[RMDB]
RNA sequence: GGGAACGACUCGAGUAGAGUCGAAAACAGAUCCGUAGUUCAGGAGUGGCUUCGAAAGAUGUGUUGCCCGACGAGUACCAUCUUCGCCUCGACCAGCGUUCAGAUCGUGCAGCAGAAGCCGAGAUGAAUAAUCAGCAGGGUUCGCCCUGCUGAUUAUAAAAGAAACAACAACAACAAC
Reactivity to DMS in 0.01 (KOAc 150mM, MgCl2 10mM, bicine 150mM(pH8.5), 24C), signal-to-noise 3, nucleotides 027 to 126: c150a090g030a100u000c020c000g030u000a110g010u000u010c050a080g010g010a120g010u000g030g020c050u010u000c050g000a120a080a070g030a030u000g000u000g000u010u000g000c000c020c050g000a070c190g010a230g020u000a050c030c030a040u000c030u010u000c060g010c030c010u010c040g000a070c050c040a140g030c130g010u000u000c050a040g000a060u000c090g010u010g020c040a060g020c090a140g020a120a120g030c000c010g000a060g010a130u010g000a080
Reactivity to 2A3 in 0.01 (KOAc 150mM, MgCl2 10mM, bicine 150mM(pH8.5), 24C), signal-to-noise 1, nucleotides 027 to 126: c030a040g040a070u060c080c030g020u070a030g060u080u110c050a020g000g060a130g040u040g020g000c000u080u000c060g080a110a050a060g060a020u070g080u030g040u120u060g020c030c040c040g010a040c060g000a050g010u070a020c010c020a030u020c000u090u030c030g040c000c000u050c010g010a080c030c020a020g040c000g090u080u040c020a020g000a120u030c010g100u140g030c040a050g030c010a020g030a080a010g000c000c020g040a050g000a030u080g000a060
The data come from the RNA Mapping Database (RMDB), library OK2TST. This 177-nucleotide RNA was probed chemically with DMS and 2A3. For DMS the reverse transcriptase was MarathonRT. The reactions ran in a buffer of 150 mM KOAc, 10 mM MgCl2 and 150 mM bicine (pH 8.5), at 24 C. For DMS, 1,959 sequencing reads were counted. 2A3 adducts were read by reverse transcription with SuperScript II with manganese.